[RMDB]
RNA sequence: GGGAACGACUCGAGUAGAGUCGAAAACUGCCAGCACAACUGUAAAAGACUUUCACAUUGGCUACAGCUGGCCUGAAUGGAGAUGGCAUUACAGCACUGGUGGACCAUCCAUCAAUCCAGGCAGUGCGCCAUAUGUGCCUUUCGAGGCACAUAUGGCAAAAGAAACAACAACAACAAC
Reactivity to DMS in 0.01 (KOAc 150mM, MgCl2 10mM, bicine 150mM(pH8.5), 24C), signal-to-noise 2, nucleotides 027 to 126: c060u000g000c020c010a050g050c080a180c140a080a150c050u000g010u000a020a020a120a120g010a160c050u000u000u020c050a020c050a070u000u000g000g010c050u030a040c060a150g010c060u000g010g010c020c030u000g000a040a050u010g000g030a030g010a000u000g000g000c130a110u000u000a000c130a120g010c000a070c100u000g020g050u010g030g000a080c120c120a050u000c030c050a010u000c070a080a130u000c040c020a040g030g040c020a000g040u000g010c110
Reactivity to 2A3 in 0.01 (KOAc 150mM, MgCl2 10mM, bicine 150mM(pH8.5), 24C), signal-to-noise 1, nucleotides 027 to 126: c010u020g010c040c000a010g000c050a030c030a130a190c050u060g010u060a000a040a070a020g170a140c050u070u080u070c070a110c020a110u050u020g010g020c030u040a030c030a140g070c070u100g000g000c000c000u060g130a100a000u060g030g050a130g010a100u010g040g000c010a010u000u130a030c020a040g040c000a010c060u000g000g000u010g050g010a060c030c030a090u100c020c000a060u080c050a060a110u000c000c020a020g060g000c000a020g040u040g070c060